RNA sequence: GGGAACGACUCGAGUAGAGUCGAAAAGCUCGGAGACGAGCAAGGCUGACAAAACGCUGUCCCCACCUCCACGUGGUGUCGGCUGGAUAAUGCUGCAUUAUGUUGCAUUUAUCAACUGGGAAGUAAACGCCACCCAUAUGUUCGCAUAUGGGUGGCGAAAAGAAACAACAACAACAAC
Reactivity to 2A3 in 0.01 (KOAc 150mM, MgCl2 10mM, bicine 150mM(pH8.5), 24C), signal-to-noise 2, nucleotides 027 to 126: g020c000u000c010g000g000a100g000a010c020g000a000g000c000a000a010g040g010c000u020g000a070c000a130a150a050a030c170g000c190u070g140u150c090c030c000c000a010c000c030u030c000c010a050c030g020u040g000g010u000g020u000c000g020g000c050u060g030g000a040u020a020a000u030g000c010u010g000c000a060u040u150a150u300g030u090u020g030c010a010u050u080u150a040u040c000a000a020c070u040g000g000g070a000a050g020u110a080a070a000
Source information:
The data come from the RNA Mapping Database (RMDB), library OK1LIB. Structure probing data (2A3) for a 177-nucleotide construct. The reactions ran in a buffer of 150 mM KOAc, 10 mM MgCl2 and 150 mM bicine (pH 8.5), at 24 C.